[RMDB]
RNA sequence: GGGAACGACUCGAGUAGAGUCGAAAAGGUGGUGCCAGACGCCCUUCGCAUAAUUCACGCCCUGCCAGCCGCUCGUCACGAACGCGCGGAUCUUCGACGCAUCGAGAUCGCCCGCCGGCGCGACGAAGAGGCGCGAGUAUUUCGAUACUCGCGCCUCAAAAGAAACAACAACAACAAC
Reactivity to DMS in 0.01 (KOAc 150mM, MgCl2 10mM, bicine 150mM(pH8.5), 24C), signal-to-noise 1, nucleotides 027 to 126: g030g000u020g000g010u000g060c040c040a140g030a160c130g050c030c020c050u000u000c030g000c060a050u030a040a080u010u000c100a120c150g000c030c030c010u000g000c030c060a130g010c050c030g000c050u030c040g000u030c050a130c140g000a040a070c040g020c060g000c050g000g000a050u020c050u010u000c000g000a090c190g000c060a090u000c050g000a050g010a070u000c020g000c030c010c000g010c060c060g010g010c070g020c010g030a020c040g000a030a030
Reactivity to 2A3 in 0.01 (KOAc 150mM, MgCl2 10mM, bicine 150mM(pH8.5), 24C), signal-to-noise 1, nucleotides 027 to 126: g030g000u020g030g000u000g010c010c010a050g020a040c000g080c000c000c140u040u000c030g020c020a050u040a120a070u240u070c050a030c070g030c030c000c020u060g000c000c000a010g000c000c010g020c030u030c020g050u050c000a030c230g070a280a000c010g140c000g000c000g070g020a020u020c070u100u020c030g020a010c030g040c050a250u090c020g010a030g080a150u040c030g040c020c050c000g040c020c020g010g000c020g000c060g000a010c000g030a120a120